Conditions: 150 mM KOAc, 10 mM MgCl2 and 150 mM bicine (pH 8.5), 24 C. Structure probing data (DMS and 2A3) for a 177-nucleotide construct. For 2A3 the reverse transcriptase was SuperScript II with manganese. The DMS profile rests on 11,454 reads.
[RMDB]
RNA sequence: GGGAACGACUCGAGUAGAGUCGAAAAAGUCAACCUACACUGCUGCCUUUCUCCCUCUGCAAUUUUAGCUGUAACUCCAGUAUGCCCGGGAUAUACUAGAGGUUUCCUUAGUGCCAGUCGUAUGGGGGAGAUGGUAUGAAUUCGUUCAUACCAUCUCAAAAGAAACAACAACAACAAC
Reactivity to DMS in 0.01 (KOAc 150mM, MgCl2 10mM, bicine 150mM(pH8.5), 24C), signal-to-noise 7, nucleotides 027 to 126: a070g010u000c070a090a130c040c020u000a100c110a080c060u010g010c040u000g000c030c030u000u000u000c040u000c030c020c010u000c040u000g010c070a080a050u000u010u010u000a110g020c040u000g010u000a090a110c050u000c040c020a030g010u000a050u000g000c030c030c040g020g000g010a090u010a050u010a040c030u010a050g010a060g010g010u000u010u000c020c020u010u010a060g010u010g020c040c040a060g010u010c080g010u000a060u000g010g000g000g010
Reactivity to 2A3 in 0.01 (KOAc 150mM, MgCl2 10mM, bicine 150mM(pH8.5), 24C), signal-to-noise 4, nucleotides 027 to 126: a000g080u040c030a030a050c010c010u040a020c050a010c040u050g020c010u050g020c020c000u030u090u010c030u020c000c020c000u050c020u020g020c020a070a070u030u080u090u150a100g010c010u000g020u120a030a040c010u020c020c010a020g020u030a060u060g010c020c010c010g030g010g010a020u050a010u010a090c020u030a030g030a020g130g000u010u060u040c020c000u030u050a030g020u020g090c030c010a020g020u050c020g030u080a100u170g000g030g000g030